[RMDB]
RNA sequence: GGGAACGACUCGAGUAGAGUCGAAAACAUUGUCCGCAAUGCAACACACAAGCGACCAACACUGAAGGUGAUUGUAACUUCUGCAACGCUUGAGAGAGAGAAGUUUUGCAACUAUUUCAAUGUUGCACUAAUCACCCUCGUUCGCGAGGGUGAUUAGAAAAGAAACAACAACAACAAC
Reactivity to 2A3 in 0.01 (KOAc 150mM, MgCl2 10mM, bicine 150mM(pH8.5), 24C), signal-to-noise 2, nucleotides 027 to 126: c010a000u040u070g010u050c040c080g000c090a010a010u070g010c020a020a050c020a010c010a000c020a130a000g040c000g070a090c050c030a020a110c000a020c080u170g100a150a070g040g000u060g040a170u080u000g000u050a030a030c000u010u010c000u020g060c050a060a060c040g010c080u040u050g020a060g010a010g000a000g000a010g000a040a010g030u070u070u130u150g000c000a010a020c000u110a190u060u190u070c070a080a050u050g010u000u000g010c010a000
Reactivity to DMS in 0.01 (KOAc 150mM, MgCl2 10mM, bicine 150mM(pH8.5), 24C), signal-to-noise 3, nucleotides 027 to 126: c040a060u000u000g010u010c170c080g010c060a060a050u000g010c050a050a100c100a110c070a140c130a060a040g020c020g010a130c130c070a060a160c060a030c020u000g020a090a040g000g010u000g000a090u010u000g010u000a070a030c010u010u000c020u000g000c050a100a040c020g020c020u010u000g000a130g010a120g020a130g000a030g000a040a050g000u000u000u000u000g010c010a000a020c010u000a130u000u000u000c040a030a070u000g000u000u000g010c050a120

This 177-nucleotide RNA was probed chemically with 2A3 and DMS.
The RNA was probed in 150 mM KOAc, 10 mM MgCl2 and 150 mM bicine (pH 8.5) at 24 C.
Values cover nucleotides 27 to 126.
For DMS, 2,077 sequencing reads were counted.